An RNA of 207 nucleotides, treated with DMS and 2A3 and read out base by base. The 2A3 profile rests on 6,368 reads. The DMS profile rests on 3,878 reads. Conditions: 150 mM KOAc, 10 mM MgCl2 and 150 mM bicine (pH 8.5), 24 C. 2A3 adducts were read by reverse transcription with SuperScript II with manganese.
RNA sequence: GGGAACGACUCGAGUAGAGUCGAAAAAACAACUGGCGAACCCUUGGUGACAUUGACGGUAGAGUGGCGUUCGACACCGUAAACUUCGUACCAAGAUCUCUGAUUCCGGGGUACCUUGAAAACGACUACUAUAAAGCUGUAGCUUUCAUCAAGAGUAGAAACAUUGUCUAUUCGUAGACAAUGUUUCAAAAGAAACAACAACAACAAC
Reactivity to DMS in 0.01 (KOAc 150mM, MgCl2 10mM, bicine 150mM(pH8.5), 24C), signal-to-noise 2, nucleotides 027 to 156: a070a030c020a060a100c050u000g030g000c050g000a140a100c050c020c030u000u010g050g030u000g010a090c090a080u000u000g020a060c020g000g050u000a010g010a160g040u000g030g000c000g000u010u000c060g030a110c030a040c050c030g000u000a040a030a100c060u000u000c070g020u000a080c030c010a060a100g010a070u000c010u000c100u010g000a190u020u000c050c000g020g010g030g040u000a050c040c030u010u000g000a010a020a070a060c030g010a090c030u000a030c020u000a190u000a080a080a110g010c060u010g030u000a050g010c010u000u010u010c080a120u000c000a060a050g010a090g030u000a130
Reactivity to 2A3 in 0.01 (KOAc 150mM, MgCl2 10mM, bicine 150mM(pH8.5), 24C), signal-to-noise 7, nucleotides 027 to 156: a000a000c080a030a020c060u060g030g000c040g020a060a060c030c010c000u010u080g030g000u040g020a030c020a090u060u080g050a020c020g000g030u040a050g010a030g080u060g030g030c030g030u040u070c050g050a030c030a030c040c010g040u060a050a070a070c040u080u090c060g030u030a040c040c010a020a040g020a080u030c060u000c010u070g060a240u170u030c050c010g010g000g010g010u030a040c000c000u020u040g030a040a050a010a010c040g140a070c020u030a000c010u040a050u130a200a130a050g040c030u040g040u060a010g020c010u050u070u080c040a060u030c010a050a030g080a020g070u190a040